The record gives the reactivity of an RNA of 177 nucleotides to DMS and 2A3. For DMS, 683 sequencing reads were counted. The 2A3 profile rests on 1,424 reads. In probing experiments dimethyl sulfate is read out at A N1 and C N3, which are open when not base-paired.
RNA sequence: GGGAACGACUCGAGUAGAGUCGAAAAGCUGCUUCGUUCGCGAAGCAGCAAAGUGGACGAGGAGCGCCGAACCCUCACAAAACAAGACGGCGCAAAAUAAAAAAACCGGAACCUUCGGGUUCCGGAACAUAUUAGAAGUGUUCGCACUUCUAAUAUGAAAAGAAACAACAACAACAAC
Reactivity to DMS in 0.01 (KOAc 150mM, MgCl2 10mM, bicine 150mM(pH8.5), 24C), signal-to-noise 1, nucleotides 027 to 126: g000c020u000g060c000u000u000c010g000u000u040c150g050c000g020a000a000g000c000a000g000c000a010a080a050g000u000g020g010a070c110g000a110g000g030a220g000c000g020c040c000g030a100a130c040c010c010u000c030a120c070a080a080a150a010c060a050a110g050a180c010g010g000c000g020c020a010a000a120a080u010a000a020a240a160a030a160a180c000c000g000g010a010a000c000c020u000u010c240g040g020g020u000u010c040c000g040g000a010a050
Reactivity to 2A3 in 0.01 (KOAc 150mM, MgCl2 10mM, bicine 150mM(pH8.5), 24C), signal-to-noise 1, nucleotides 027 to 126: g030c010u010g000c010u000u000c030g080u020u060c140g030c000g100a000a000g020c000a000g000c000a000a000a000g050u080g110g100a080c090g000a030g020g030a080g000c010g000c010c000g020a150a180c040c000c000u010c000a180c080a020a110a050a040c010a000a000g080a010c000g000g000c000g000c000a010a000a130a000u190a010a170a040a040a010a010a040c020c000g000g000a000a000c000c040u070u070c160g150g000g010u000u000c000c000g010g000a010a000